[RMDB]
RNA sequence: GGGAACGACUCGAGUAGAGUCGAAAAUACGCGAGGUUCGCCUCGCGUAAAAGAGGAGCGUAAACGUGAGCGUACGUAGUGCUGUACAUCGUUCCAACACGAAUGCACAUGGUUUCGACCAUGUGAAGAAAGACUCUAGGUUCGCCUAGAGUCUUUCAAAAGAAACAACAACAACAAC
Reactivity to DMS in 0.01 (KOAc 150mM, MgCl2 10mM, bicine 150mM(pH8.5), 24C), signal-to-noise 5, nucleotides 027 to 126: u000a000c000g020c000g010a010g000g010u000u020c240g030c010c010u000c000g010c010g020u000a000a020a080a130g010a180g020g000a040g010c020g000u000a040a100a070c120g010u010g000a100g020c160g020u010a050c110g000u000a080g020u000g010c010u000g000u000a050c060a080u000c020g010u010u000c010c020a060a080c200a070c180g000a070a110u010g000c010a000c000a000u000g010g000u000u000u010c190g000a040c000c000a000u000g000u000g000a060a060
Reactivity to 2A3 in 0.01 (KOAc 150mM, MgCl2 10mM, bicine 150mM(pH8.5), 24C), signal-to-noise 5, nucleotides 027 to 126: u050a000c000g000c000g000a000g030g030u050u120c190g060c040c000u000c000g000c000g000u000a000a000a000a000g120a050g030g030a010g000c020g040u110a060a130a090c070g040u070g060a040g040c040g050u070a030c070g050u080a050g090u080g140c040u040g040u070a010c010a060u040c010g010u000u000c010c010a030a020c080a020c070g170a150a080u250g020c000a010c000a010u010g000g010u020u110u120c200g050a000c000c000a000u000g000u000g000a000a030

The data come from the RNA Mapping Database (RMDB), library M2PK50. Structure probing data (DMS and 2A3) for a 177-nucleotide construct. For 2A3 the reverse transcriptase was SuperScript II with manganese. The 2A3 profile rests on 7,198 reads.